[RMDB]
RNA sequence: GGGAACGACUCGAGUAGAGUCGAAAACGGCUAAAACCCGAUACGCGCAAACGCUACCGUAUGAGCGGAAAACGCGGCGUGUACUAGAGGAGUUUGGCGCUUACCAUGAUCUCUCAGCGAACCGCGGGCUGGGACGUGGUUUCGACCAUGUCUCGGUAAAAGAAACAACAACAACAAC
Reactivity to 2A3 in 0.01 (KOAc 150mM, MgCl2 10mM, bicine 150mM(pH8.5), 24C), signal-to-noise 9, nucleotides 027 to 126: c010g040g000c030u060a020a010a020a060c010c000c000g020a040u020a040c020g020c000g000c040a090a100a050c060g010c020u030a040c010c000g030u070a170u300g150a130g060c010g020g000a080a090a020a010c050g000c010g010g000c000g000u030g000u010a040c050u060a040g070a110g060g020a110g030u020u040u050g040g000c030g000c040u020u050a050c010c010a040u070g040a050u030c030u000c000u010c040a010g010c010g050a070a050c020c030g020c040g030g050
Reactivity to DMS in 0.01 (KOAc 150mM, MgCl2 10mM, bicine 150mM(pH8.5), 24C), signal-to-noise 9, nucleotides 027 to 126: c120g010g020c040u010a050a040a070a080c080c010c010g000a160u010a020c030g000c010g010c040a060a070a300c060g000c070u010a140c030c040g010u000a100u050g010a130g010c010g000g000a040a050a090a130c120g010c260g000g000c030g020u010g010u000a030c090u010a080g010a110g000g000a100g010u010u010u000g000g020c050g010c060u010u010a110c050c020a050u020g000a080u020c040u010c010u000c030a060g000c040g010a090a080c050c030g010c060g010g000